[RMDB]
Background:
Structure probing data (2A3 and DMS) for a 177-nucleotide construct.

RNA sequence: GGGAACGACUCGAGUAGAGUCGAAAAGAUAUGGAGAGUUCAUCUUUUGACGCUCUAAGCCUCGGAAACGAGGCGAUGGAGCGAUAAGAUGGCUCUCCUAAGUCAAACUCGACGUUCGCGUCGAGAACUUCAUUGAUAGCUUCGGCUAUCAAUGAAGAAAAGAAACAACAACAACAAC
Reactivity to 2A3 in 0.01 (KOAc 150mM, MgCl2 10mM, bicine 150mM(pH8.5), 24C), signal-to-noise 3, nucleotides 027 to 126: g010a000u060a020u140g010g010a010g000a000g010u300u300c010a020u000c000u050u150u140u250g300a170c140g000c000u000c020u010a020a040g030c000c000u010c000g020g030a060a030a030c000g020a000g030g010c000g010a010u180g020g000a010g010c000g000a010u050a020a000g000a000u010g010g000c000u010c000u000c000c000u010a000a000g000u000c020a010a030a070c010u000c010g000a000c010g000u060u140c300g000c010g170u000c010g000a010g010a010a070
Reactivity to DMS in 0.01 (KOAc 150mM, MgCl2 10mM, bicine 150mM(pH8.5), 24C), signal-to-noise 3, nucleotides 027 to 126: g020a060u000a300u000g010g000a020g000a020g000u010u000c000a020u000c000u010u000u000u000g030a270c120g020c000u000c000u010a150a300g010c000c000u010c000g000g000a070a060a250c000g020a010g000g030c000g000a050u010g000g000a010g000c000g010a000u000a010a030g010a030u010g000g020c000u010c020u000c000c010u010a010a080g000u000c030a200a140a140c020u000c000g010a020c000g030u000u000c230g040c030g010u000c000g020a010g020a070a170

Overview
The reactions ran in a buffer of 150 mM KOAc, 10 mM MgCl2 and 150 mM bicine (pH 8.5), at 24 C. The data come from the RNA Mapping Database (RMDB), library TTRDES. For DMS the reverse transcriptase was MarathonRT.